[RMDB]
RNA sequence: GGGAACGACUCGAGUAGAGUCGAAAAGGAUCUCUUUUGAGAUCCAGCUAGCUUUUGCUAGCGAUGUCCUCCGCACCCACCAGGAGGACUGAUUGAUUGAUUGAUGGAUAGCCGCCGGUACCAGGCUAUCCGGUGGGUGAUAUGAUCGGUGCCGGAACGUGAUGGAGUGAUUCGUCACUCCAUCACGAAAAGAAACAACAACAACAAC
Reactivity to 2A3 in 0.01 (KOAc 150mM, MgCl2 10mM, bicine 150mM(pH8.5), 24C), signal-to-noise 1, nucleotides 027 to 156: g010g000a010u010c010u030c040u070u260u290u300g000a040g000a000u000c000c000a000g000c000u000a000g000c000u000u170u210u300g000c000u000a010g020c000g000a050u110g010u010c010c000u020c000c000g000c030a110c000c000c000a000c000c000a020g000g030a090g020g000a000c000u000g000a000u230u020g010a040u040u010g080a090u020u130g050a110u280g000g000a000u040a000g000c000c040g060c060c040g010g000u000a010c000c010a000g000g000c000u010a000u000c000c000g000g000u000g000g020g010u000g010a060u090a060u210g140a080u130c100g010g000u000g040c060c100g010g000a140a030